[RMDB]
RNA sequence: GGGAACGACUCGAGUAGAGUCGAAAAGAAAACCCCGAAAGUCCGAAAGGGGGAAAGGACGAAAGACUGGAACUACGAAAGAUGGAAAGUAGGAAACAUCGAAACAGUCGAAAGAAGAAAGAAAGAAGGGAAAACAUUAGUUCGCUAAUGUUUUCCCAAAAGAAACAACAACAACAAC
Reactivity to 2A3 in 0.01 (KOAc 150mM, MgCl2 10mM, bicine 150mM(pH8.5), 24C), signal-to-noise 2, nucleotides 027 to 126: g020a000a170a010a040c010c000c000c020g130a080a090a030g030u050c060c000g010a110a010a070g020g000g010g000g000a070a130a000g000g050a000c020g050a070a010a000g000a010c000u010g080g060a120a010c020u080a070c120g090a160a010a120g060a020u040g040g080a140a010a020g040u070a040g040g000a010a130a000c070a000u130c040g000a080a080a000c030a010g000u010c000g000a050a000a050g020a000a000g040a000a240a000g060a050a100a000g080a090a080
Reactivity to DMS in 0.01 (KOAc 150mM, MgCl2 10mM, bicine 150mM(pH8.5), 24C), signal-to-noise 2, nucleotides 027 to 126: g000a110a070a070a110c100c010c000c050g030a090a090a130g030u000c050c010g000a070a190a140g010g010g000g000g000a060a030a180g000g060a030c020g000a130a010a090g020a040c000u060g010g000a120a080c120u010a060c140g000a070a080a100g000a070u000g020g000a120a110a070g010u000a070g000g000a120a110a040c050a030u000c100g040a160a100a050c080a020g000u040c000g000a060a070a040g000a110a050g000a010a110a080g010a150a020a020g010a040a050